[RMDB]
RNA sequence: GGGAACGACUCGAGUAGAGUCGAAAAAGAUGACCAAGGGCAUCAUUUAGACUCCUAUUUUGUCGUUAAGAGGCAUACUAUGGAGAAUUAUGAACUAGAGAAGCACUGUUACGACUUGUUACGUGACCGGACGAUAUAUCUUCGGAUAUAUCGUCCGAAAAGAAACAACAACAACAAC
Reactivity to DMS in 0.01 (KOAc 150mM, MgCl2 10mM, bicine 150mM(pH8.5), 24C), signal-to-noise 2, nucleotides 027 to 126: a010g020a090u000g010a170c020c020a140a210g030g020g010c020a040u000c020a030u000u010u030a180g000a220c050u010c080c010u000a060u000u010u010u000g020u000c010g000u000u040a070a100g020a160g000g010c010a030u000a080c140u010a040u000g000g010a040g010a120a130u010u010a060u020g000a100a100c050u000a040g010a090g030a110a070g000c030a050c210u000g010u000u000a020c020g000a070c100u020u000g000u010u000a050c080g030u010g020a070c050
Reactivity to 2A3 in 0.01 (KOAc 150mM, MgCl2 10mM, bicine 150mM(pH8.5), 24C), signal-to-noise 2, nucleotides 027 to 126: a020g020a000u080g020a030c010c060a070a120g100g050g000c020a020u000c010a010u090u080u020a020g030a050c020u030c010c000u020a020u010u010u050u020g020u000c020g030u030u030a100a030g150a120g060g040c030a030u030a040c030u110a090u160g030g000a060g010a020a010u140u060a120u110g090a040a040c020u020a070g020a020g020a170a020g030c040a030c090u050g020u030u010a010c000g000a020c010u070u100g030u090u110a020c010g010u020g000a000c000